[RMDB]
RNA sequence: GGGAACGACUCGAGUAGAGUCGAAAAGGUAUCAGCCACCAUGUGAUGGUAUAUGGAACGUGUUAUGUAACCGAACAUCGCAAGGCGAGGAAAUGUUUUUUACAAACAAAUCCAUCUCAUUUAUGUGGUCUCCGUUCACUUUCGAGUGAACGGAGACAAAAGAAACAACAACAACAAC
Reactivity to 2A3 in 0.01 (KOAc 150mM, MgCl2 10mM, bicine 150mM(pH8.5), 24C), signal-to-noise 1, nucleotides 027 to 126: g170g000u080a010u300c020a050g030c000c000a000c030c000a000u070g050u090g000a000u050g030g120u000a280u000a070u160g000g130a080a000c110g070u140g210u280u130a190u240g030u090a030a030c000c030g030a000a000c000a000u000c000g000c000a000a000g000g000c000g050a040g000g010a150a120a000u090g080u000u000u000u000u050u050a080c220a090a000a000c000a000a000a000u000c000c000a040u030c090u080c080a120u000u180u110a090u150g300u150g030